[RMDB]
RNA sequence: GGGAACGACUCGAGUAGAGUCGAAAACUGCCUCUAUUAUUAUACCGUAAAUCUUUUUAAAUUCUGGAACUAAUUAUAUAGAGGAUAUGUCUCAAUUUGUUCUGCAUUAAUGCCACAGUGGGGAUGGCCUGAAUGCCUAUUUCGAUAGGCAUUCAGGAAAAGAAACAACAACAACAAC
Reactivity to 2A3 in 0.01 (KOAc 150mM, MgCl2 10mM, bicine 150mM(pH8.5), 24C), signal-to-noise 3, nucleotides 027 to 126: c040u090g000c000c000u040c000u010a010u020u010a010u010u000a010u100a070c020c000g060u050a040a080a110u150c080u090u290u020u060u300a090a180a160u110u010c050u230g000g010a010a030c000u020a020a020u220u040a110u010a010u020a100g000a000g000g000a010u000a050u120g010u000c040u000c040a110a100u050u030u130g090u070u040c070u070g050c010a010u060u120a130a040u230g010c020c000a020c020a040g040u070g000g020g020g050a000u050g060g000
Reactivity to DMS in 0.01 (KOAc 150mM, MgCl2 10mM, bicine 150mM(pH8.5), 24C), signal-to-noise 1, nucleotides 027 to 126: c100u000g000c020c000u000c000u020a030u020u020a020u020u010a010u020a290c030c030g000u020a050a010a240u120c030u050u010u000u030u020a060a070a150u030u020c080u070g000g010a050a130c140u000a000a000u000u000a000u030a060u050a000g000a000g010g000a050u040a020u020g000u020c000u010c000a070a080u000u000u030g000u000u000c080u010g060c010a030u030u030a050a020u030g000c000c100a020c230a070g030u000g010g000g000g000a080u000g000g030